[RMDB]
An RNA of 207 nucleotides, treated with 2A3 and DMS and read out base by base.
2A3 adducts were read by reverse transcription with SuperScript II with manganese.
For DMS the reverse transcriptase was MarathonRT.
The reactions ran in a buffer of 150 mM KOAc, 10 mM MgCl2 and 150 mM bicine (pH 8.5), at 24 C.
For 2A3, 896 sequencing reads were counted.
Reactivities are given for positions 27 through 156.
RNA sequence: GGGAACGACUCGAGUAGAGUCGAAAAUUAAAUGCUUACAAUGACAUACAGAUUUGGUGGUCCCUUGUAUUGAUGCUUCGCUUCAAUACACAAAGUCACAAUGUUAAAUCUCAGAAGCCACAAGGGCUGAUGUAUUUCAGCAGAGAAUAGUUAGAAAUCAUUUUACGUGGUUCGCCACGUAAAAUGAAAAAGAAACAACAACAACAAC
Reactivity to 2A3 in 0.01 (KOAc 150mM, MgCl2 10mM, bicine 150mM(pH8.5), 24C), signal-to-noise 2, nucleotides 027 to 156: u140u100a000a070a060u080g060c000u060u080a070c100a060a210u140g080a040c030a030u140a010c050a030g090a170u070u010u150g110g010u040g010g020u080c050c000c000u010u060g000u010a000u000u020g000a020u030g000c020u160u300c160g020c020u020u020c060a020a010u050a000c030a000c000a040a070a000g050u040c020a000c020a070a030u050g000u080u040a090a050a100u050c020u000c060a050g080a100a050g040c010c040a030c050a140a080g180g000g000c020u000g000a000u000g070u170a060u010u040u020c040a010g000c020a000g080a000g020a210a130u080a100g080u070u080a040g060a040a070a080
Reactivity to DMS in 0.01 (KOAc 150mM, MgCl2 10mM, bicine 150mM(pH8.5), 24C), signal-to-noise 2, nucleotides 027 to 156: u000u000a040a170a100u000g010c030u010u000a120c080a080a230u000g020a050c030a140u010a170c080a150g000a130u000u000u000g020g000u020g030g000u000c000c030c040u000u010g020u010a020u000u000g000a070u010g000c040u000u010c150g000c020u000u000c020a040a030u000a030c060a070c080a020a020a070g020u010c020a080c030a100a100u000g000u000u020a040a060a120u020c050u010c050a220g020a110a100g050c040c050a020c110a060a140g000g020g030c030u000g020a080u000g000u000a010u010u010u000c000a020g020c010a160g030a120g000a010a090u000a130g030u030u000a110g010a150a130a120